[RMDB]
RNA sequence: GGGAACGACUCGAGUAGAGUCGAAAAACUUUGAUGGCGGUACUAUGAAUUGAUGCAAGGUGUGGAGGGACCUUAAACAGUUCUGGUGGUGCUCUGAAUGGAGUGCUCUACUGAGAUUAUAAAAUAGCAUGCAUAGAGUGCUUCGGCACUCUAUGAACUCGCAGUUGACCUUCGGGUCAACUGCGAGAAAAGAAACAACAACAACAAC
Reactivity to 2A3 in 0.01 (KOAc 150mM, MgCl2 10mM, bicine 150mM(pH8.5), 24C), signal-to-noise 1, nucleotides 027 to 156: a000c040u100u070u130g020a080u080g000g000c030g000g000u070a070c050u090a060u150g040a080a050u120u030g080a050u100g100c030a000a040g030g010u060g010u080g000g000a020g000g000g000a020c000c000u070u050a050a050a010c010a010g000u050u080c010u050g000g020u060g000g070u010g000c000u000c020u050g030a050a040u170g000g000a030g000u030g000c010u020c000u030a050c000u010g080a040g050a090u040u190a080u200a050a040a110a050u140a030g030c030a030u040g230c000a000u010a000g000a000g000u000g010c010u020u030c000g020g000c000a000c020u000c000u000a000u000g000a000a000